[RMDB]
RNA sequence: GGGAACGACUCGAGUAGAGUCGAAAAGAUAUGGAGCCAGUAGGGAGAAGCAUAUCGGAAACGAUAUGGCUUCGAAGAACUACGGGCUCCUAAGUCAAAACGACUUUUAAGUUCGCUUAAAAGUCGAGGUACGUCUUUAGUUCGCUAAAGACGUACCAAAAGAAACAACAACAACAAC
Reactivity to 2A3 in 0.01 (KOAc 150mM, MgCl2 10mM, bicine 150mM(pH8.5), 24C), signal-to-noise 1, nucleotides 027 to 126: g010a010u020a000u040g000g000a000g000c020c050a020g020u020a000g060g020g000a240g020a040a010g000c000a020u010a010u020c040g020g030a020a000a000c020g000a010u000a000u030g280g030c020u000u000c020g000a070a050g070a020a010c010u000a010c030g000g010g020c000u000c000c000u000a000a000g000u000c000a000a050a070a220c020g010a040c000u030u020u030u030a020a000g030u030u170c300g060c120u020u010a010a020a000a010g000u000c010g010a050
Reactivity to DMS in 0.01 (KOAc 150mM, MgCl2 10mM, bicine 150mM(pH8.5), 24C), signal-to-noise 2, nucleotides 027 to 126: g010a030u000a070u020g000g000a010g000c000c000a030g000u000a010g010g000g040a060g020a030a040g000c000a010u000a020u000c000g040g010a000a000a040c010g000a050u000a020u010g020g020c000u000u000c000g060a110a140g000a210a300c000u000a010c000g000g010g000c000u000c000c000u010a000a050g010u000c000a090a100a140a290c010g000a040c000u000u000u000u000a000a020g020u010u010c300g060c000u000u020a010a000a010a020g000u000c010g030a040